[RMDB]
RNA sequence: GGGAACGACUCGAGUAGAGUCGAAAAAGUGAGUAUGGCUCGUUACGACGGGCCAUACUCACAACGGUUUUCCUAAAUCGUCGUGAGACGGACCUUGGAAAACCUAGUAUUUAAAUAACUAGGUCAAAUUAGCCUAGAUCCUUCGGGAUCUAGGCAACCUCGACAUACACUUCGGUGUAUGUCGAGGAAAAGAAACAACAACAACAAC
Reactivity to 2A3 in 0.01 (KOAc 150mM, MgCl2 10mM, bicine 150mM(pH8.5), 24C), signal-to-noise 1, nucleotides 027 to 156: a000g000u000g000a000g020u010a000u000g000g000c000u010c020g000u010u040a100c300g020a000c000g120g000g040c000c000a000u000a000c000u000c000a000c000a000a000c000g000g000u000u000u000u000c000c000u000a000a000a000u060c000g000u000c000g000u020g120a120g000a050c000g000g010a000c000c000u010u030g000g000a010a010a010a000c000c000u000a000g040u010a060u030u110u060a210a300a210u180a060a020c120u080a020g000g000u000c020a000a030a190u130u130a040g010c020c000u000a000g000a000u000c000c000u000u100c150g080g000g000a000u000c000u000a000g010g010c000a000a000